[RMDB]
RNA sequence: GGGAACGACUCGAGUAGAGUCGAAAAUCUACAUAGUUCGCUAUGUAGAAAAACGCGCACCCGCGCGCACGCGCUCACUCUCGCACACGCACGCGCACGCAAAAACGUUGCGGUUCGCCGCAACGAACCAUUGGAUGUAGUUCGCUACAUCCAAUGGAAAAGAAACAACAACAACAAC
Reactivity to 2A3 in 0.01 (KOAc 150mM, MgCl2 10mM, bicine 150mM(pH8.5), 24C), signal-to-noise 3, nucleotides 027 to 126: u010c010u000a000c000a020u020a000g010u020u060c200g020c100u000a000u000g000u000a010g010a020a010a000a000a000c060g010c010g000c020a050c010c020c020g000c000g000c010g020c010a020c050g040c010g010c010u040c040a100c020u100c010u040c050g030c030a040c000a000c110g050c000a020c040g010c010g020c010a010c030g050c030a030a050a030a050a070c010g000u000u000g000c000g030g050u040u030c240g030c040c000g000c000a000a010c000g010a010a040
Reactivity to DMS in 0.01 (KOAc 150mM, MgCl2 10mM, bicine 150mM(pH8.5), 24C), signal-to-noise 3, nucleotides 027 to 126: u000c000u000a010c000a000u000a010g030u010u010c240g050c000u000a000u000g020u010a000g000a010a080a040a080a100c150g000c070g030c070a090c070c070c080g010c030g000c020g000c050a030c060g000c040g030c040u000c070a040c100u000c060u000c030g000c050a070c110a040c080g010c040a080c040g000c040g000c030a080c110g010c090a050a040a050a030a140c000g000u000u010g010c010g020g000u000u010c120g010c020c000g000c010a010a020c010g000a040a100
Conditions: 150 mM KOAc, 10 mM MgCl2 and 150 mM bicine (pH 8.5), 24 C. Structure probing data (2A3 and DMS) for a 177-nucleotide construct. The 2A3 profile rests on 7,676 reads. Values cover nucleotides 27 to 126.